This 177-nucleotide RNA was probed chemically with 2A3 and DMS. For DMS the reverse transcriptase was MarathonRT. As a SHAPE reagent, 2A3 marks flexible, mostly unpaired nucleotides at the ribose 2'-OH. 2A3 adducts were read by reverse transcription with SuperScript II with manganese.
[RMDB]
RNA sequence: GGGAACGACUCGAGUAGAGUCGAAAACGAUGAUGCGACGUUACGCACGAUGAGUGACACGCUCUUACAGUUGACUGUUCAAUAUAAAGGGCGCGACACGCAUUACUUGGUACUUACGCAUUUGGUGCCAUGCCACCAAGUUCGCUUGGUGGCAUGGAAAAGAAACAACAACAACAAC
Reactivity to 2A3 in 0.01 (KOAc 150mM, MgCl2 10mM, bicine 150mM(pH8.5), 24C), signal-to-noise 4, nucleotides 027 to 126: c030g060a060u200g010a000u010g000c000g020a010c040g070u230u040a030c060g030c100a010c060g000a010u010g000a010g040u000g010a030c000a000c020g010c010u000c000u000u090a110c070a100g010u040u040g090a060c140u220g240u300u060c030a060a020u080a030u070a200a060a000g000g000g000c000g000c000g000a010c000a000c000g020c020a000u000u030a080c050u050u050g060g020u010a010c000u060u030a070c020g000c010a020u030u010u120g110g000u040g030
Reactivity to DMS in 0.01 (KOAc 150mM, MgCl2 10mM, bicine 150mM(pH8.5), 24C), signal-to-noise 3, nucleotides 027 to 126: c040g000a120u010g000a000u000g000c020g030a160c090g020u020u010a010c000g010c070a110c300g010a000u000g000a040g010u000g010a170c010a050c000g010c000u000c010u000u000a090c250a130g010u010u010g010a090c240u020g020u000u000c030a020a010u000a100u000a120a050a030g000g010g020c010g010c010g020a070c000a010c000g020c000a020u010u000a110c180u010u000g030g000u010a010c020u000u010a130c010g000c020a020u000u020u010g000g000u000g000